[RMDB]
RNA sequence: GGGAACGACUCGAGUAGAGUCGAAAACCAUGCCGAGCCGCCCUACGUAAAGGGCACGAACGGUGCACCACGCAAUAGGUUCACCAUGGUGGCUAACGAUAGCAUGUUCGCGUUGGCUGGAAGAGCAGCGGUGUAGCAUGACGACCCACUGAUGGAAUCUUUAAUCUUUGUUCGCAAAGAUUAAAGAAAAAGAAACAACAACAACAAC
Reactivity to DMS in 0.01 (KOAc 150mM, MgCl2 10mM, bicine 150mM(pH8.5), 24C), signal-to-noise 3, nucleotides 027 to 156: c020c000a090u010g000c020c010g020a160g030c030c020g000c040c130c020u000a090c120g010u000a070a070a050g010g010g030c010a010c040g000a100a060c080g050g030u000g030c010a080c000c030a070c060g030c080a130a100u000a070g020g010u000u000c040a120c010c010a040u010g020g030u000g010g020c050u000a050a080c040g020a170u010a090g000c040a050u010g020u000u000c030g030c080g030u010u000g030g000c010u010g020g020a120a140g000a110g010c020a040g010c030g000g000u000g030u010a060g000c020a070u000g010a110c040g010a140c110c000c010a090c060u000g010a110u020g010g000a120a160
Reactivity to 2A3 in 0.01 (KOAc 150mM, MgCl2 10mM, bicine 150mM(pH8.5), 24C), signal-to-noise 9, nucleotides 027 to 156: c010c000a030u080g000c020c020g050a030g050c030c040g010c010c020c010u080a090c040g110u100a160a170a080g000g000g000c010a010c010g030a070a020c050g010g000u030g010c040a020c030c010a060c060g110c040a070a140u090a230g030g000u030u030c020a020c010c000a030u070g030g010u020g030g000c050u040a060a020c030g050a060u060a060g040c020a020u020g020u040u040c030g000c010g020u030u030g130g020c020u040g040g120a080a030g030a020g060c020a010g010c010g010g050u090g030u070a010g010c020a010u020g040a060c020g060a050c010c010c010a030c050u080g060a080u060g030g060a060a070
Annotation:
Conditions: 150 mM KOAc, 10 mM MgCl2 and 150 mM bicine (pH 8.5), 24 C. Chemical mapping of a 207-nucleotide RNA with DMS and 2A3. 2A3 adducts were read by reverse transcription with SuperScript II with manganese. For DMS the reverse transcriptase was MarathonRT. For DMS, 6,532 sequencing reads were counted.